[RMDB]
RNA sequence: GGGAACGACUCGAGUAGAGUCGAAAAAGACGGAAACCCAUCGACUGUCACCAGAUGCUGCAUCACCUGAUCACUGAUGGCUCAACGGUAUCCGGCGGUACAACUGAAUACUUGUAGCUGCCUUUUGCAUAUGGGGUUAGUUCGCUAACCCCAUAUGAAAAGAAACAACAACAACAAC
Reactivity to DMS in 0.01 (KOAc 150mM, MgCl2 10mM, bicine 150mM(pH8.5), 24C), signal-to-noise 5, nucleotides 027 to 126: a080g010a070c040g020g000a060a100a110c060c010c020a110u000c070g000a110c070u010g010u000c050a110c040c060a030g010a050u010g020c080u000g000c060a040u000c040a060c030c020u000g010a050u000c100a060c110u000g000a080u000g000g010c040u000c060a070a090c080g000g000u010a040u000c030c060g010g020c020g010g020u010a040c100a060a050c110u010g010a090a110u010a040c120u010u000g010u010a060g010c030u000g010c040c010u000u000u000u010g010
Reactivity to 2A3 in 0.01 (KOAc 150mM, MgCl2 10mM, bicine 150mM(pH8.5), 24C), signal-to-noise 3, nucleotides 027 to 126: a000g030a020c040g050g020a050a050a020c000c000c010a050u070c050g090a060c040u070g020u070c020a010c030c010a010g030a090u050g030c040u040g020c020a040u030c010a040c020c000u030g040a030u070c010a020c060u040g010a030u050g050g030c020u040c050a050a120c090g070g000u050a070u060c030c030g000g040c020g020g000u030a010c010a020a010c040u140g060a150a040u080a140c040u020u050g020u040a030g050c020u030g050c000c000u040u050u050u110g180